[RMDB]
An RNA of 177 nucleotides, treated with DMS and read out base by base. The reactions ran in a buffer of 150 mM KOAc, 10 mM MgCl2 and 150 mM bicine (pH 8.5), at 24 C. For DMS the reverse transcriptase was MarathonRT. The DMS profile rests on 1,117 reads. DMS (dimethyl sulfate) methylates the pairing face of unpaired adenines and cytosines.

RNA sequence: GGGAACGACUCGAGUAGAGUCGAAAAAAACGAUACGCGGGUACAUGGGAACGUCAGCCACCAUUACAUCCGGUGAGCAGUCAGGUGCGGUGAUACGUGGUGUUUUUGAUGACCCUGAAAAUAUCAGCAAAAUAGGCGUGUUCGCACGCCUAUUUUGAAAAGAAACAACAACAACAAC
Reactivity to DMS in 0.01 (KOAc 150mM, MgCl2 10mM, bicine 150mM(pH8.5), 24C), signal-to-noise 2, nucleotides 027 to 126: a120a040a030c120g000a040u010a060c070g000c100g020g000g020u000a050c030a080u020g020g000g030a070a050c090g000u000c060a040g000c140c000a010c040c000a030u010u020a120c120a060u000c060c030g000g020u000g000a110g010c180a090g000u000c050a080g010g020u000g030c080g010g020u000g020a100u000a040c140g020u000g010g040u000g000u000u000u000u000u000g000a050u000g000a220c000c030c020u000g010a040a000a090a130u020a040u020c040a080g020